[RMDB]
RNA sequence: GGGAACGACUCGAGUAGAGUCGAAAAACGCAGAAGUGGGAGAUGCAGCCUUAUUUCGAUAUGGCUGCUAGUUUGAAUAUCCCCGUUCGUGUGAUCGAGGCAACUGGAAACUUCAAGAACGUUCAUGGCGUUCCGGAUGAGGCUAUUGAGCGGAUGCACACUUAUUUCCGUUCGCGGAAAUAAGUGUAAAAGAAACAACAACAACAAC
Reactivity to DMS in 0.01 (KOAc 150mM, MgCl2 10mM, bicine 150mM(pH8.5), 24C), signal-to-noise 2, nucleotides 027 to 156: a080c060g030c070a120g030a070a070g030u000g020g000g020a100g000a130u000g000c010a000g020c000c000u000u000a030u000u000u000c220g020a080u000a040u000g000g010c010u010g020c000u000a020g040u000u010u010g010a110a160u000a120u010c020c010c000c010g000u000u000c050g030u020g000u010g000a070u000c030g020a100g020g040c010a040a100c030u000g000g040a130a100a070c070u010u000c040a090a030g010a040a060c020g030u000u000c160a120u000g000g000c010g000u010u000c010c020g000g000a080u010g010a120g000g020c040u000a140u000u010g010a110g010c020g010g010a090u000g020c110
Reactivity to 2A3 in 0.01 (KOAc 150mM, MgCl2 10mM, bicine 150mM(pH8.5), 24C), signal-to-noise 3, nucleotides 027 to 156: a010c060g020c080a050g000a200a000g040u150g020g040g000a060g000a060u140g000c000a000g000c000c000u020u040a060u040u160u140c120g060a010u020a010u040g010g000c000u000g000c000u000a000g000u010u120u160g040a080a050u110a060u090c010c000c010c010g000u000u020c030g020u020g010u020g040a120u040c050g010a020g030g030c020a100a060c080u040g040g020a090a040a090c020u140u060c110a060a060g010a080a030c020g020u080u070c060a040u090g070g000c010g010u050u060c020c030g040g010a050u100g010a030g000g000c000u020a060u060u100g010a010g020c000g040g020a030u100g050c040